[RMDB]
RNA sequence: GGGAACGACUCGAGUAGAGUCGAAAACGCGUCGCACACGCACGACACGCGUAAGGAUGCGACGGCGAAGGGUGCCGAGAUGGCAAGGGACCGGAAGGCCGAGCACACGGUAUUCAACCGCGGGGAUGGGCGGAUCAGCCAAAAGGACAGCUACGGCAAAUACAAUGUGUUUCGACACAUUGUAUUUAAAAGAAACAACAACAACAAC
Reactivity to DMS in 0.01 (KOAc 150mM, MgCl2 10mM, bicine 150mM(pH8.5), 24C), signal-to-noise 3, nucleotides 027 to 156: c020g030c010g050u010c000g030c010a010c070a030c080g010c070a170c030g020a150c100a280c110g060c000g000u010a120a070g030g010a140u000g010c020g070a060c010g010g010c030g010a090a130g020g000g030u020g020c020c000g000a170g010a210u000g020g050c050a110a110g000g000g010a110c030c030g040g040a070a130g000g020c000c000g030a110g030c050a150c040a080c080g040g010u000a230u010u010c120a110a090c020c020g020c040g000g010g030g010a140u000g010g020g020c020g000g000a060u010c060a110g010c030c020a050a030a050a110g020g010a080c060a090g030c020u000a100c020g030g010c070
Reactivity to 2A3 in 0.01 (KOAc 150mM, MgCl2 10mM, bicine 150mM(pH8.5), 24C), signal-to-noise 5, nucleotides 027 to 156: c030g000c000g000u010c000g000c010a030c000a010c040g070c020a060c110g260a050c060a030c130g030c020g010u030a080a110g170g030a070u050g000c000g000a010c010g070g020c010g040a040a060g050g000g010u080g010c020c000g050a070g040a130u200g030g010c010a020a040g040g000g020a050c020c040g040g020a040a030g080g000c020c030g030a030g000c040a020c010a010c090g030g000u070a110u120u140c050a070a070c010c010g000c020g000g000g000g010a070u070g030g000g000c060g010g030a080u080c020a020g030c010c000a050a130a030a040g040g020a050c040a050g010c020u120a070c050g030g000c000